[RMDB]
Chemical mapping of a 207-nucleotide RNA with 2A3 and DMS. Source: RMDB library OK3TST, as collected in RNAgym. For DMS the reverse transcriptase was MarathonRT.

RNA sequence: GGGAACGACUCGAGUAGAGUCGAAAAGGGCUUGAUCCAUCGCCCGAAUAAGAUGGAUGAUACAAGUCGACAUAGUACGCGACAUAGAACGUACUCAUUGAAGUGCGAAAGCACGAAGUCCGACGAGUCUGGGACGAUCAUCAGGCAAGACUUAGAAACCCAUAUAAUGCUUCGGCAUUAUAUGGGUAAAAGAAACAACAACAACAAC
Reactivity to 2A3 in 0.01 (KOAc 150mM, MgCl2 10mM, bicine 150mM(pH8.5), 24C), signal-to-noise 6, nucleotides 027 to 156: g010g000g000c010u050u060g060a000u000c020c000a000u000c000g010c000c010c010g020a070a140u200a060a040g010a010u020g030g010a000u010g020a000u050a120c090a090a040g010u010c020g010a020c030a070u090a010g000u020a010c010g040c040g080a060c080a120u190a060g070a050a000c000g010u020a010c000u030c020a070u060u180g090a100a040g010u010g000c010g060a080a030a010g010c000a000c020g020a050a000g020u020c070c030g010a060c030g010a040g010u000c050u070g020g010g020a050c050g040a090u090c020a050u050c010a040g010g040c040a060a040g020a040c010u030u040a050g090a090a120
Reactivity to DMS in 0.01 (KOAc 150mM, MgCl2 10mM, bicine 150mM(pH8.5), 24C), signal-to-noise 3, nucleotides 027 to 156: g000g010g030c050u010u010g060a060u010c000c010a010u000c010g030c050c040c060g000a110a100u010a030a080g010a060u000g010g010a020u000g030a200u010a060c080a080a090g050u000c010g010a060c050a200u000a020g010u000a000c020g050c000g000a300c170a270u020a170g010a110a020c000g010u000a010c010u000c130a140u000u010g010a120a190g000u000g020c010g010a120a120a220g030c010a020c020g010a140a150g010u000c020c020g020a140c040g000a110g010u000c020u010g010g020g000a060c070g000a130u010c060a050u010c030a060g000g020c000a120a080g010a120c040u020u000a110g000a110a120